[RMDB]
RNA sequence: GGGAACGACUCGAGUAGAGUCGAAAAAGAUGUACCAGGUCCCACUGACAUUGGACCGGGAUGGGACCCUAGUCCGGCUCCGCUUCACUAUGGUGGCCCUGAUCACUGUCUGCUGUCCACUUGUCGCGCCACUCAGUAGUUUCGACUACUGAGUGGCAAAAGAAACAACAACAACAAC
Reactivity to DMS in 0.01 (KOAc 150mM, MgCl2 10mM, bicine 150mM(pH8.5), 24C), signal-to-noise 2, nucleotides 027 to 126: a070g010a080u000g010u010a110c050c050a090g000g000u000c070c000c050a090c060u000g000a070c210a120u000u000g010g030a060c020c050g000g020g010a050u010g000g000g000a040c030c090c090u020a080g010u010c050c080g010g020c030u000c030c060g000c080u010u010c000a060c130u000a050u000g010g020u000g000g010c300c020c010u010g010a070u000c050a040c050u010g000u010c000u000g020c040u010g000u000c000c030a080c150u000u000g020u000c080g000c220